[RMDB]
RNA sequence: GGGAACGACUCGAGUAGAGUCGAAAAUCUCAGGUCUUCGGACCUGAGAAAAAUAAAAUAAGCUAAUCGUCAAAGCACUACACUGUAGAUAAAGACCACAAAAAAGGACAAUCUUCGGAUUGUCCAACUACAUGAUAAAGUUCGCUUUAUCAUGUAGAAAAGAAACAACAACAACAAC
Reactivity to 2A3 in 0.01 (KOAc 150mM, MgCl2 10mM, bicine 150mM(pH8.5), 24C), signal-to-noise 4, nucleotides 027 to 126: u020c000u000c000a000g010g000u000c000u020u090c170g110g000a000c010c000u000g000a010g000a000a020a000a000a000u020a000a020a000a010u210a090a080g020c030u040a040a080u080c030g060u030c070a170a100a020g020c010a030c030u040a010c240a040c110u190g020u050a020g010a060u050a050a060a030g030a010c030c020a030c100a090a110a020a020a030a030g000g000a000c000a000a000u010c000u050u080c220g010g000a010u000u010g000u000c000c000a000a000
Reactivity to DMS in 0.01 (KOAc 150mM, MgCl2 10mM, bicine 150mM(pH8.5), 24C), signal-to-noise 4, nucleotides 027 to 126: u000c000u000c000a010g020g000u000c000u000u020c240g040g010a010c000c010u000g010a000g000a000a020a070a070a040u010a060a030a050a070u000a120a150g010c020u010a090a060u000c180g000u000c040a100a070a050g000c020a230c030u000a030c030a100c100u010g000u000a020g010a060u000a020a080a130g000a070c010c080a050c250a010a030a080a040a070a100g000g000a010c000a010a000u000c000u020u010c150g020g010a020u000u000g010u000c000c000a010a050

An RNA of 177 nucleotides, treated with 2A3 and DMS and read out base by base. The RNA was probed in 150 mM KOAc, 10 mM MgCl2 and 150 mM bicine (pH 8.5) at 24 C. Source: RMDB library M2PK50, as collected in RNAgym. For 2A3, 6,390 sequencing reads were counted.